[RMDB]
RNA sequence: GGGAACGACUCGAGUAGAGUCGAAAAUGCUACUGUGACGAAUGGGAGGCGAAUGACUAUAUGGUGGAGUCGCCUCAGUUUUGCGCCGGCCCUCUGCUCUAUGUGCACAGGCGCUGUCCCUGUCCCAACGCGGGACGCUCGCUCGCUUUCACCGUCAGGUGGUAUGGAGGUUCGCCUCCAUACCACCAAAAGAAACAACAACAACAAC
Reactivity to 2A3 in 0.01 (KOAc 150mM, MgCl2 10mM, bicine 150mM(pH8.5), 24C), signal-to-noise 2, nucleotides 027 to 156: u080g020c000u040a030c010u030g010u010g080a030c000g140a130a050u120g000g000g050a030g000g000c010g040a070a040u130g030a010c040u060a070u060a080u300g070g030u050g000g140a070g110u060c030g020c000c000u000c000a010g000u000u010u050u150g020c010g020c020c070g000g300c010c030c000u070c060u060g020c000u040c020u120a150u150g090u150g020c050a020c010a010g000g000c030g000c010u020g050u000c000c000c000u060g000u010c010c000c020a110a090c140g020c070g050g000g000a020c010g020c040u070c040g050c000u030c000g050c000u080u120u120c060a070c190c010g060u100c000a050
Description
Chemical mapping of a 207-nucleotide RNA with 2A3. 2A3 adducts were read by reverse transcription with SuperScript II with manganese. Reactivities are given for positions 27 through 156. It was measured as part of the RMDB library OK3TST.